Structure probing data (DMS and 2A3) for a 177-nucleotide construct.
The data come from the RNA Mapping Database (RMDB), libraries RFM100 and RFMREP.
In probing experiments dimethyl sulfate is read out at A N1 and C N3, which are open when not base-paired.
The RNA was probed in 150 mM KOAc, 10 mM MgCl2 and 150 mM bicine (pH 8.5) at 24 C.
RNA sequence: GGGAACGACUCGAGUAGAGUCGAAAAGAGGUGUUAGCGCGAGCGAAGCACCGAAGCCAAGCCCCGGUAAACGGCGGCCGUAACUAUAACGGUCCUAAGGUAGCGAAAUUCCUUGUCGGGUAAGUUCUUCUCGAUAUUAUUUCGAUAAUAUCGAGAAAAAAGAAACAACAACAACAAC
Reactivity to DMS in 0.01 (KOAc 150mM, MgCl2 10mM, bicine 150mM(pH8.5), 24C), signal-to-noise 9, nucleotides 027 to 126: g010a300g000g010u000g000u000u000a300g000c010g010c280g000a220g020c000g010a140a160g000c000a000c000c000g000a160a050g000c020c030a130a160g000c090c010c000c020g000g000u010a040a070a120c120g010g010c130g000g000c010c010g000u000a080a100c210u020a110u030a070a030c010g000g000u000c010c030u010a070a050g010g010u010a090g000c070g010a070a080a140u010u000c010c010u000u000g010u010c020g010g000g000u010a080a080g000u000u010c050
Reactivity to 2A3 in 0.01 (KOAc 150mM, MgCl2 10mM, bicine 150mM(pH8.5), 24C), signal-to-noise 4, nucleotides 027 to 126: g070a020g000g010u040g040u270u020a020g000c030g010c050g010a040g010c000g010a020a000g010c000a000c000c000g010a050a000g050c010c000a040a020g020c020c000c010c000g020g010u070a100a070a020c060g060g000c030g030g000c010c010g010u030a070a040c070u080a100u070a300a030c010g010g010u030c000c020u050a060a030g040g000u020a010g090c050g100a040a030a070u120u050c000c000u030u050g040u030c010g000g000g030u040a080a050g030u050u030c020